[RMDB]
RNA sequence: GGGAACGACUCGAGUAGAGUCGAAAACUUCGACUUCGGUCGAAGAAAAAAGCGUACUACCUUGAGGUGGAGGUAGAAGGGAUCCCAAAUAGGAUCCGCUUCUAUAAUCUCCACUACCCACCAAGGUAUCGCAAAAAUUGACGCUUCGGCGUCAAAACUAGAAAUAAUUGUUCGCAAUUAUUUCUAGAAAAGAAACAACAACAACAAC
Reactivity to DMS in 0.01 (KOAc 150mM, MgCl2 10mM, bicine 150mM(pH8.5), 24C), signal-to-noise 2, nucleotides 027 to 156: c000u000u010c010g030a000c010u000u000c280g030g000u000c000g010a030a070g010a000a010a110a140a090a130g000c030g030u020a140c160u000a020c020c010u000u010g000a080g020g000u000g000g010a000g070g020u000a010g000a020a030g010g020g010a000u000c020c000c020a030a120a220u020a030g000g010a030u000c000c000g040c010u010u000c000u020a050u010a100a090u000c030u010c000c010a010c000u000a030c010c020c040a300c140c000a030a000g030g020u000a000u000c020g110c020a000a090a060a120a130u000u000g010a030c000g040c010u010u010c300g060g030c000g030u000c000a010a000a110a260
Reactivity to 2A3 in 0.01 (KOAc 150mM, MgCl2 10mM, bicine 150mM(pH8.5), 24C), signal-to-noise 2, nucleotides 027 to 156: c000u020u000c010g010a000c010u030u060c290g100g000u000c000g010a000a010g000a070a110a000a000a010a000g060c060g000u080a110c040u020a010c020c000u000u020g000a010g030g010u000g000g000a010g010g000u000a000g000a000a000g000g000g010a000u030c010c010c050a120a280a090u220a100g000g000a000u010c000c050g110c110u000u000c000u010a050u010a060a120u050c000u000c000c000a000c000u010a000c010c000c000a030c010c000a010a000g010g010u010a010u300c010g050c030a030a060a030a080a080u060u020g000a010c000g000c010u030u060c250g110g010c000g000u000c010a010a000a000a010

This 207-nucleotide RNA was probed chemically with DMS and 2A3. It was measured as part of the RMDB library RNAMAK. The 2A3 profile rests on 2,590 reads.